[RMDB]
RNA sequence: GGGAACGACUCGAGUAGAGUCGAAAAGAAAGGCAGCUAGUGCAGCCCACGCAGCGGCAUGCUUUUGCAUGCCCAGUCGAGCCCACGACUCAGGGCAGCUGCGACACUGAGGGCAGCUGCCGAAAGAACUAUCCGGCAUCUUCGGAUGCCGGAUAGUAAAAGAAACAACAACAACAAC
Reactivity to DMS in 0.01 (KOAc 150mM, MgCl2 10mM, bicine 150mM(pH8.5), 24C), signal-to-noise 1, nucleotides 027 to 126: g040a040a130a160g000g020c010a060g000c010u000a120g050u000g000c120a050g040c030c080c050a170c080g010c020a020g020c120g020g040c000a000u000g000c030u000u000u000u030g030c020a060u020g000c020c000c060a020g000u000c020g010a300g020c000c000c000a300c020g020a050c020u000c070a150g010g000g020c100a110g020c020u000g000c000g000a150c210a060c160u010g000a060g070g020g020c010a000g020c020u000g010c000c010g000a030a050a050g000a100
Reactivity to 2A3 in 0.01 (KOAc 150mM, MgCl2 10mM, bicine 150mM(pH8.5), 24C), signal-to-noise 1, nucleotides 027 to 126: g100a060a110a000g010g000c040a000g040c020u180a090g120u290g200c070a000g010c000c020c010a030c030g040c010a010g000c020g040g000c020a020u030g000c010u300u300u300u300g000c010a010u010g000c000c030c000a000g010u000c010g000a000g000c000c010c010a030c010g050a010c010u070c080a040g060g110g000c020a000g030c000u010g000c000g000a050c140a060c120u150g050a070g030g000g010c010a000g000c000u000g000c030c010g000a000a000a000g000a050
Structure probing data (DMS and 2A3) for a 177-nucleotide construct. The reactions ran in a buffer of 150 mM KOAc, 10 mM MgCl2 and 150 mM bicine (pH 8.5), at 24 C. The data come from the RNA Mapping Database (RMDB), library OK2TRN. Values cover nucleotides 27 to 126. DMS adducts were read by reverse transcription with MarathonRT.